[RMDB]
RNA sequence: GGGAACGACUCGAGUAGAGUCGAAAAGGGACUCGGGUCCGUCGUUCCAUCCUUUUCUUACCUUUUGGCCGGCAUGGCCCCAGCCUCCUCGCUGGCGCCGGCUGGGCAACGAUCCGAGGGGACUAUCAGCGAUAGUGGUUCGCCACUAUCAAAAGAAACAACAACAACAAC
Reactivity to DMS in 0.01 (KOAc 150mM, MgCl2 10mM, bicine 150mM(pH8.5), 24C), signal-to-noise 9, nucleotides 027 to 129: g020g000g020a030c010u020c060g000g040g000u020c040c100g040u000c030g000u000u030c020c020a110u040c050c020u000u030u040u030c040u030u030a130c040c030u020u010u040u030g010g000c030c020g000g000c050a100u070g000g000c000c110c010c020a030g020c000c100u030c120c100u050c230g000c010u000g030g030c300g030c000c020g000g010c010u000g000g000g000c000a070a060c170g020a060u000c030c040g000a040g000g010g000g020a060c110u050a080u040c090a060g010c220
Reactivity to 2A3 in 0.01 (KOAc 150mM, MgCl2 10mM, bicine 150mM(pH8.5), 24C), signal-to-noise 9, nucleotides 027 to 129: g080g020g010a010c000u010c010g030g010g140u020c030c020g030u010c010g020u020u000c000c000a030u070c000c000u050u120u100u070c040u090u130a170c040c020u080u080u040u110g160g040c000c000g020g020c070a190u180g030g000c010c020c010c000a000g000c000c010u150c030c010u110c080g000c010u000g000g010c010g000c000c000g030g000c000u020g000g000g000c010a040a020c060g060a040u000c020c010g010a010g010g020g010g010a010c030u100a110u250c110a030g010c020
This 170-nucleotide RNA was probed chemically with DMS and 2A3.
For DMS the reverse transcriptase was MarathonRT.
The RNA was probed in 150 mM KOAc, 10 mM MgCl2 and 150 mM bicine (pH 8.5) at 24 C.
2A3 adducts were read by reverse transcription with SuperScript II with manganese.